[RMDB]
RNA sequence: GGGAACGACUCGAGUAGAGUCGAAAAUUGGUGCAUUCGUUGGCCGCGGUAGGAUUGAUUAUCGUGAUUAUGGUGCAUAUUUAUGCUGCCCUGUGGGUGAAAGGCACCAUUACCGCGAUGGUAGAAGCACUUCGUUAGGAUUCGUCCUAACGAAGUGAAAAGAAACAACAACAACAAC
Reactivity to DMS in 0.01 (KOAc 150mM, MgCl2 10mM, bicine 150mM(pH8.5), 24C), signal-to-noise 4, nucleotides 027 to 126: u000u000g010g030u000g000c030a070u010u010c080g020u000u000g000g000c060c040g040c060g010g000u000a050g000g010a120u010u010g010a070u000u010a040u000c030g020u000g010a050u010u000a010u000g010g010u000g000c000a060u010a110u000u010u010a110u010g010c160u010g000c010c010c020u010g010u010g020g010g030u000g020a040a050a100g000g000c000a000c000c000a010u000u000a020c030c010g000c020g000a020u000g010g030u000a090g000a110a130g020
Reactivity to 2A3 in 0.01 (KOAc 150mM, MgCl2 10mM, bicine 150mM(pH8.5), 24C), signal-to-noise 4, nucleotides 027 to 126: u060u070g030g010u060g010c030a060u010u060c040g030u050u100g070g010c010c000g040c020g060g030u080a070g000g100a130u080u110g040a020u030u220a030u050c020g020u030g030a020u020u070a030u030g030g000u020g000c020a020u010a060u150u120u040a170u240g140c110u090g020c000c010c070u200g090u300g040g000g030u060g080a130a060a080g060g000c000a020c000c020a000u000u040a020c010c000g000c020g010a010u050g020g010u070a050g030a170a020g060
Background
The record gives the reactivity of an RNA of 177 nucleotides to DMS and 2A3. Reactivities are given for positions 27 through 126. For 2A3, 3,924 sequencing reads were counted.